[RMDB]
RNA sequence: GGGAACGACUCGAGUAGAGUCGAAAAAUUCGAACCAGGGAAUGCCGGUAUCAAAAACCGGUGCCUUACCGCUUGGCGAUACCCCAUCCGUACAACGCUUUCUGGUGAAUGGUGCGGGAGGCGAGACCAAAUGUACGGGAUUCGUCCCGUACAUUUGAAAAGAAACAACAACAACAAC
Reactivity to DMS in 0.01 (KOAc 150mM, MgCl2 10mM, bicine 150mM(pH8.5), 24C), signal-to-noise 5, nucleotides 027 to 126: a080u000u000c040g030a130a130c020c020a050g010g010g010a080a050u000g020c020c010g010g010u000a060u010c270a110a150a090a110a030c020c010g000g010u000g010c080c080u010u000a060c040c020g010c120u000u010g000g010c080g010a100u010a070c040c020c030c070a090u020c070c070g020u000a050c090a090a120c080g010c040u000u010u000c070u010g000g010u000g010a060a070u000g000g020u000g020c000g000g000g000a040g000g010c060g010a090g010a120c180
Reactivity to 2A3 in 0.01 (KOAc 150mM, MgCl2 10mM, bicine 150mM(pH8.5), 24C), signal-to-noise 4, nucleotides 027 to 126: a010u050u040c010g010a050a020c020c010a020g030g030g030a080a060u070g010c000c010g030g000u040a060u230c140a050a080a020a030a020c020c000g000g000u010g020c010c020u010u080a170c010c010g040c110u030u080g030g000c030g060a050u100a110c000c000c000c020a050u050c030c020g030u080a050c030a110a050c080g010c050u090u190u140c080u190g080g020u050g080a160a120u160g090g040u100g020c040g000g010g000a010g000g020c040g020a050g020a050c030